The record gives the reactivity of an RNA of 177 nucleotides to DMS.
RNA sequence: GGGAACGACUCGAGUAGAGUCGAAAAGAUAUGGAUUGUUGGCUAUGUUCUCCAUCAUAAGACAGCGUUAGGUCGGAAACGACCUUACGCAAUGACGUGAGGAGAACAUAGCCAACAAUCCUAAGUCCAUCCAUGUUGAGUUCGCUCAACAUGGAUGAAAAGAAACAACAACAACAAC
Reactivity to DMS in 0.01 (KOAc 150mM, MgCl2 10mM, bicine 150mM(pH8.5), 24C), signal-to-noise 2, nucleotides 027 to 126: g010a110u020a300u020g000g020a000u000u000g010u000u010g000g000c010u000a010u000g010u000u010c000u010c000c000a090u000c010a010u000a100a170g020a220c240a100g010c010g040u000u000a010g010g000u000c010g000g000a070a120a220c000g000a040c000c000u000u000a010c000g030c010a060a060u010g030a160c300g000u010g000a060g020g000a020g010a000a010c010a000u000a000g000c010c000a000a000c000a010a000u000c000c000u000a020a060g010u010c030

It was measured as part of the RMDB library TTRINS.
The DMS profile rests on 2,370 reads.
For DMS the reverse transcriptase was MarathonRT.